Annotation
The record gives the reactivity of an RNA of 177 nucleotides to DMS and 2A3. Reactivities are given for positions 27 through 126. The reactions ran in a buffer of 150 mM KOAc, 10 mM MgCl2 and 150 mM bicine (pH 8.5), at 24 C. It was measured as part of the RMDB library OK2TRN. DMS (dimethyl sulfate) methylates the pairing face of unpaired adenines and cytosines.
RNA sequence: GGGAACGACUCGAGUAGAGUCGAAAAACACAACUGAAUGCAUUACAUUAUAGUGAUUUCUAAAUCAGCAGAGGAGUCUUUUACAUGCUUCUUGAUUGGUCACAAUGACUACUCUGUGCCAGUCAUCAUACAUGGCGAAUUUCGAUUCGCCAUGUAUAAAAGAAACAACAACAACAAC
Reactivity to DMS in 0.01 (KOAc 150mM, MgCl2 10mM, bicine 150mM(pH8.5), 24C), signal-to-noise 3, nucleotides 027 to 126: a090c060a060c070a090a100c140u000g010a040a060u010g010c110a110u010u010a120c060a060u010u000a080u010a140g000u000g000a100u000u000u000c050u000a040a080a080u000c190a020g000c030a040g000a050g010g000a030g020u000c020u010u000u020u010a110c180a060u000g010c030u000u000c140u000u000g010a030u000u000g000g020u010c060a010c030a030a160u000g010a050c030u010a050c030u000c010u000g020u000g020c010c020a000g000u000c010a090u010c160
Reactivity to 2A3 in 0.01 (KOAc 150mM, MgCl2 10mM, bicine 150mM(pH8.5), 24C), signal-to-noise 2, nucleotides 027 to 126: a000c050a050c040a090a070c070u100g050a100a010u100g040c040a050u070u240a090c030a040u080u100a080u120a240g040u000g060a080u000u160u000c060u090a180a180a130u150c050a040g000c010a010g010a010g060g000a030g000u000c000u030u260u050u150a120c090a050u080g060c010u130u040c000u080u060g050a050u010u040g000g050u210c020a000c010a040a030u160g000a010c040u010a040c010u080c020u030g000u010g010c030c010a020g000u000c000a010u070c030